[RMDB]
RNA sequence: GGGAACGACUCGAGUAGAGUCGAAAACGAUAGCGGCGCGCGCGCGCAUACGCCGCAUAGCGGCGUAUGCGGCGUAUAUACGCCGCUAUGCGCGCUAUUAUAUACGCAUAGCGAUAUAUCGCCGCGCCGUCAUAUAGUCAUUCGUGACUAUAUGACGAAAAGAAACAACAACAACAAC
Reactivity to DMS in 0.01 (KOAc 150mM, MgCl2 10mM, bicine 150mM(pH8.5), 24C), signal-to-noise 3, nucleotides 027 to 126: c050g000a120u020a090g010c000g000g010c000g010c220g030c090g020c060g040c050g090c170a060u000a050c080g110c040c060g150c050a140u010a050g120c040g120g060c050g060u010a010u000g020c050g010g010c050g020u000a040u010a070u010a060c040g000c040c000g000c000u000a000u000g000c000g000c050g000c100u010a060u030u010a070u000a060u010a070c010g010c030a090u000a100g000c000g030a110u000a040u000a040u000c060g000c120c010g020c000g010c100
Reactivity to 2A3 in 0.01 (KOAc 150mM, MgCl2 10mM, bicine 150mM(pH8.5), 24C), signal-to-noise 1, nucleotides 027 to 126: c040g100a070u080a050g000c000g000g000c020g000c010g000c000g000c040g000c010g000c140a000u060a020c000g020c110c010g000c120a060u210a080g090c080g030g000c000g040u000a000u010g020c000g000g000c000g010u020a010u000a000u000a020c020g000c010c000g010c010u000a010u000g000c000g000c000g020c040u020a040u270u050a050u090a020u030a050c020g010c080a130u100a060g000c010g010a000u010a000u010a000u060c040g050c100c000g010c020g000c030
Structure probing data (DMS and 2A3) for a 177-nucleotide construct.
Values cover nucleotides 27 to 126.
For DMS the reverse transcriptase was MarathonRT.
The RNA was probed in 150 mM KOAc, 10 mM MgCl2 and 150 mM bicine (pH 8.5) at 24 C.